RNA sequence: GGGAACGACUCGAGUAGAGUCGAAAAGUGUAUGCUCUCUUGCAUGGAGACUUUCAUUGGGAAUAAAAUGUUUGAAACUAUUUUACUAUUUCUUGCACUGCUUUGAGAUACUACCAGCAAAGCUAUUUCUAAGCUGAGACGCUAUGUCCUGGCAGGACUAGCUAUCCGACUUCGGUCGGAUAGCUAGAAAAGAAACAACAACAACAAC
Reactivity to 2A3 in 0.01 (KOAc 150mM, MgCl2 10mM, bicine 150mM(pH8.5), 24C), signal-to-noise 2, nucleotides 027 to 156: g020u050g000u030a070u090g000c030u000c000u010c000u030u050g060c070a100u180g020g020a060g040a020c020u110u160u060c090a110u070u120g040g000g050a010a080u080a100a090a050a070u080g030u040u120u090g080a090a070a030c040u080a130u110u190u060u150a080c020u040a120u050u090u000c010u030u010g030c060a050c100u030g030c000u090u090u030g040a100g020a000u040a030c020u010a050c070c010a020g030c000a070a090a000g020c060u050a110u040u170u000c100u070a060a040g000c000u010g020a010g000a160c040g000c040u070a100u050g030u000c000c020u000g010g000c010a010g010g030a010